[RMDB]
RNA sequence: GGGAACGACUCGAGUAGAGUCGAAAACUGUGGUACUCACCGAAGGCGCGAACGUUGGAAAAGAAAAGUAGAAAGCUGGGUAAGACUCACCUGGCGACUCGUCGUCGACGAAGGGUCCUCAGCAGAGCAUCAGUAUCAUGUUCGCAUGAUACUGAUGAAAAGAAACAACAACAACAAC
Reactivity to DMS in 0.01 (KOAc 150mM, MgCl2 10mM, bicine 150mM(pH8.5), 24C), signal-to-noise 5, nucleotides 027 to 126: c040u000g020u010g010g000u010a050c030u000c040a070c100c030g010a090a170g020g010c020g010c030g020a050a070c070g010u000u010g000g000a050a060a100a130g000a060a070a060a120g010u000a100g000a110a140a130g010c030u000g010g000g000u010a090a080g010a160c070u000c040a080c110c030u010g000g010c020g000a040c070u000c150g000u010c040g000u000c030g020a120c040g010a110a130g010g000g010u000c010c000u000c000a030g010c060a070g010a140g010
Reactivity to 2A3 in 0.01 (KOAc 150mM, MgCl2 10mM, bicine 150mM(pH8.5), 24C), signal-to-noise 4, nucleotides 027 to 126: c010u010g020u030g070g020u070a050c010u020c040a030c040c020g030a050a010g020g020c010g020c010g030a050a020c030g050u110u150g100g040a050a110a050a040g130a030a110a050a030g090u080a060g110a150a130a000g000c040u020g000g030g000u080a130a050g060a110c030u020c050a010c010c000u010g020g000c010g020a030c010u020c050g180u070c020g020u030c020g070a050c040g040a100a080g010g000g000u010c000c010u020c000a030g000c040a030g020a020g100
Structure probing data (DMS and 2A3) for a 177-nucleotide construct. 2A3 is a SHAPE reagent: it acylates the 2'-hydroxyl of flexible nucleotides of all four kinds. The 2A3 profile rests on 4,828 reads. The data come from the RNA Mapping Database (RMDB), library VIROID. For 2A3 the reverse transcriptase was SuperScript II with manganese.